[RMDB]
Structure probing data (2A3) for a 207-nucleotide construct.
RNA sequence: GGGAACGACUCGAGUAGAGUCGAAAAUAGGGUUUCGACCCUAAACUUCGGGGUCGAUCGGGAUGAGGCUUUUGACGAGCUGAAGCCUCCACGGCUCGAUAAGCUACCCACCAUCUUGAUCGACGGAGGCACCCAUGAGGCGACAUUCGUGUCGCAACGAAGCGAUAGCAUUCGUGCUAUCGCUUCGAAAAGAAACAACAACAACAAC
Reactivity to 2A3 in 0.01 (KOAc 150mM, MgCl2 10mM, bicine 150mM(pH8.5), 24C), signal-to-noise 2, nucleotides 027 to 156: u120a030g100g000g020u070u060u130c200g070a080c010c000c000u030a080a050a030c040u090u090c060g100g000g050g000u010c000g000a010u000c010g010g010g000a020u030g030a050g110g000c000u080u070u120u190g250a130c060g000a000g000c000u010g010a060a000g010c000c000u000c000c010a030c030g000g000c000u000c000g080a120u030a190a010g000c000u060a110c030c030c030a060c020c000a010u000c000u000u020g000a000u020c010g000a010c000g000g000a000g010g000c010a010c000c000c000a060u190g190a040g150g000c000g000a000c010a030u120u180c230g120u070g000u060c010g000c010a020a010